[RMDB]
This 207-nucleotide RNA was probed chemically with 2A3.

RNA sequence: GGGAACGACUCGAGUAGAGUCGAAAAAGGGCCUCCAGCCUAGAGAAGGAUGCCAGGGGAAAAGAUUGAGAGGAAGAUUAAGACCCAAUUUCUACUGCCUAAGAGGAUGGUAGGCGGAAAGAUUAGCCUGAGGAUAGAUAAAUAAGACAAAACAGAACCCUAUCACUCAGUUCGCUGAGUGAUAGGGAAAAGAAACAACAACAACAAC
Reactivity to 2A3 in 0.01 (KOAc 150mM, MgCl2 10mM, bicine 150mM(pH8.5), 24C), signal-to-noise 1, nucleotides 027 to 156: a000g030g030g000c000c000u000c020c000a000g000c020c010u050a030g000a000g000a090a070g020g000a020u080g010c030c040a040g070g000g010g000a100a100a020a210g050a040u200u260g020a010g020a060g080g030a060a050g060a110u100u090a000a100g040a060c000c080c000a000a030u000u030u030c000u050a040c020u030g000c000c000u010a020a020g050a010g050g010a030u090g030g040u020a000g030g050c000g060g040a000a130a020g080a030u130u150a000g030c020c030u030g030a020g000g030a030u210a040g000a010u150a110a110a020u170a060a000g020a030c060a030a050a000a040c150a040g210a160a020
For 2A3, 542 sequencing reads were counted.
The data come from the RNA Mapping Database (RMDB), library OK3TST.